[RMDB]
RNA sequence: GGGAACGACUCGAGUAGAGUCGAAAACAGGUAUUGCCACUGUACUGCUGAUGCUUGGCUUUUUUGUUGGUGUUGGCAUCUUCGUGAUGAAAGAUCAGAAGGAGCACGGACACCAGGAUAGAAAAGAGCUAUACGACCAAUUCGUUGGUCGUAUAGCAAAAGAAACAACAACAACAAC
Reactivity to 2A3 in 0.01 (KOAc 150mM, MgCl2 10mM, bicine 150mM(pH8.5), 24C), signal-to-noise 7, nucleotides 027 to 126: c040a000g040g050u110a070u110u140g040c010c020a030c020u060g040u080a060c040u070g040c030u030g010a110u050g050c030u090u060g030g020c000u000u020u020u000u030u060g190u040u030g020g000u000g010u000u010g020g010c010a060u010c010u000u000c060g250u060g030a020u010g060a090a170a090g260a060u030c000a000g010a000a000g030g010a030g010c050a060c120g120g010a000c000a000c000c010a000g040g070a060u110a120g080a020a050a020a010g080a010
Reactivity to DMS in 0.01 (KOAc 150mM, MgCl2 10mM, bicine 150mM(pH8.5), 24C), signal-to-noise 3, nucleotides 027 to 126: c060a030g010g000u010a020u010u000g000c020c030a080c070u000g020u000a070c120u010g010c030u030g000a070u000g000c070u000u000g020g010c020u000u010u010u000u010u000g030u000u000g010g010u000g030u010u000g010g000c030a050u000c000u000u000c030g000u000g000a020u010g000a100a110a160g010a050u010c030a160g020a010a000g000g000a020g020c000a090c150g010g000a030c020a000c000c000a010g000g020a070u010a050g010a040a040a030a050g020a150